RNA sequence: GGGAACGACUCGAGUAGAGUCGAAAAGAUAUGGACGCAGUAGGGAGUCGUUCGGAAACGAAUACGACGACGAUCUAUGGGCGUCCUAAGUCAAAGUUAAGUUCGAGGUUCGCCUCGAACUUAACAAUCUGAACUAAGUGUUCGCACUUAGUUCAGAAAAAGAAACAACAACAACAAC
Reactivity to DMS in 0.01 (KOAc 150mM, MgCl2 10mM, bicine 150mM(pH8.5), 24C), signal-to-noise 5, nucleotides 027 to 126: g020a040u000a300u000g010g010a000c000g030c000a300g000u000a020g000g010g010a300g010u000c000g010u000u020c010g010g000a080a100a180c260g000a120a070u000a110c050g000a020c000g010a010c040g010a300u000c000u000a010u000g000g020g000c010g000u000c000c010u000a020a050g000u000c050a100a080a130g000u000u010a000a000g000u000u000c000g010a010g000g010u000u010c260g010c010c000u000c000g010a000a000c000u000u000a000a000c000a080a110
Reactivity to 2A3 in 0.01 (KOAc 150mM, MgCl2 10mM, bicine 150mM(pH8.5), 24C), signal-to-noise 4, nucleotides 027 to 126: g020a020u090a060u180g010g010a000c000g010c010a010g000u020a010g020g020g030a060g010u020c030g050u200u150c030g040g060a210a220a030c180g070a180a070u270a180c030g000a000c000g000a010c010g010a010u000c000u000a010u030g060g190g010c020g010u000c000c010u000a030a020g000u000c060a110a030a020g010u000u000a000a000g010u000u000c000g000a000g000g050u050u150c240g120c030c000u000c000g000a000a000c000u000u000a000a000c000a010a010
Chemical mapping of a 177-nucleotide RNA with DMS and 2A3. DMS adducts were read by reverse transcription with MarathonRT. It was measured as part of the RMDB library TTRDEL. The reactions ran in a buffer of 150 mM KOAc, 10 mM MgCl2 and 150 mM bicine (pH 8.5), at 24 C. For DMS, 5,625 sequencing reads were counted. For 2A3, 9,208 sequencing reads were counted.